The record gives the reactivity of an RNA of 177 nucleotides to DMS. Reactivities are given for positions 27 through 126.
[RMDB]
RNA sequence: GGGAACGACUCGAGUAGAGUCGAAAAUGCCAACCAGUGAAAAUCCUGCAAUUGCUCGGGAUGUGUGGGCAGCGGCUUAUUAUCCAACAAUUCAGGUGCGGCAACCACGAUACGUGGCACUUCGGCCGCGGAGGACGACAUUCGUGUCGUCCUCCGCAAAAGAAACAACAACAACAAC
Reactivity to DMS in 0.01 (KOAc 150mM, MgCl2 10mM, bicine 150mM(pH8.5), 24C), signal-to-noise 1, nucleotides 027 to 126: u000g010c120c030a050a260c100c050a070g010u000g010a070a070a170a100u000c000c000u010g000c120a060a060u000u000g000c110u010c170g080g000g020a010u000g000u010g060u000g000g010g000c050a200g000c160g040g010c000u000u000a060u000u000a090u000c000c010a160a090c090a060a080u000u000c020a000g050g000u000g020c050g000g000c040a050a130c000c030a060c040g030a250u000a080c050g060u000g000g000c190a080c270u000u010c010g030g000c160c040